Structure probing data (DMS) for a 177-nucleotide construct.
High DMS reactivity at an A or C suggests that its Watson-Crick edge is free.
For DMS, 763 sequencing reads were counted.
The reactions ran in a buffer of 150 mM KOAc, 10 mM MgCl2 and 150 mM bicine (pH 8.5), at 24 C.
DMS adducts were read by reverse transcription with MarathonRT.
RNA sequence: GGGAACGACUCGAGUAGAGUCGAAAAUAACCAAUCCAUCACAGGGGCACCUUCGCCCCCUGCCCCGUCUCAGGUAAGUUCAGAGGACACAAUCUUAUGGCAACUAUCGAAGCAACCCAAGCCCCCACAUCGUCCUCAAAUUCGUUUGAGGACGAUGAAAAGAAACAACAACAACAAC
Reactivity to DMS in 0.01 (KOAc 150mM, MgCl2 10mM, bicine 150mM(pH8.5), 24C), signal-to-noise 1, nucleotides 027 to 126: u000a120a190c040c040a120a070u020c080c080a070u000c070a110c130a080g000g010g070g010c040a060c220c060u000u010c060g010c150c000c000c060c030u010g020c000c000c000c060g010u000c060u030c030a040g030g000u000a030a070g010u000u010c030a030g030a150g000g020a100c110a080c080a080a080u000c030u010u000a070u000g010g020c050a050a080c100u000a060u010c010g000a030a050g010c030a070a120c020c020c010a120a150g020c020c000c000c030c040a190
Description: The data come from the RNA Mapping Database (RMDB), library OK2TRN.